[RMDB]
RNA sequence: GGGAACGACUCGAGUAGAGUCGAAAAAAAGGCAACCGUCAGAUCGUUAUGACCUCGACGUCGGGCAUGGCGGCGUAGUCGUUGUCUUGGGUCAGGAUCGCAAUGCCGUGCGCCACGGCUGUGGCCGCCUCCAGAGUAUCUUCGGAUACUCUGGAGGAAAAGAAACAACAACAACAAC
Reactivity to 2A3 in 0.01 (KOAc 150mM, MgCl2 10mM, bicine 150mM(pH8.5), 24C), signal-to-noise 7, nucleotides 027 to 126: a000a000a000g040g000c030a030a030c040c020g060u050c040a040g030a240u060c020g030u070u040a070u150g270a300c010c010u130c060g170a180c060g080u170c030g010g000g020c040a030u040g030g000c010g010g000c040g010u050a060g040u050c020g000u010u010g020u000c000u030u070g030g000g010u070c070a080g010g060a180u110c030g000c070a040a110u130g010c000c020g010u020g020c090g060c040c060a010c020g030g000c040u050g010u060g040g000c020c000g010
Reactivity to DMS in 0.01 (KOAc 150mM, MgCl2 10mM, bicine 150mM(pH8.5), 24C), signal-to-noise 4, nucleotides 027 to 126: a050a040a020g010g010c020a070a050c070c060g000u000c060a070g010a060u010c020g020u010u010a030u020g010a070c010c000u020c120g000a120c150g020u030c050g040g000g010c070a030u020g000g010c040g000g000c030g000u020a120g010u030c080g020u020u000g020u000c060u000u010g000g000g020u020c020a050g020g000a060u010c020g020c060a060a100u030g020c030c000g010u000g010c100g030c080c030a110c010g000g010c050u010g010u010g020g000c030c040g020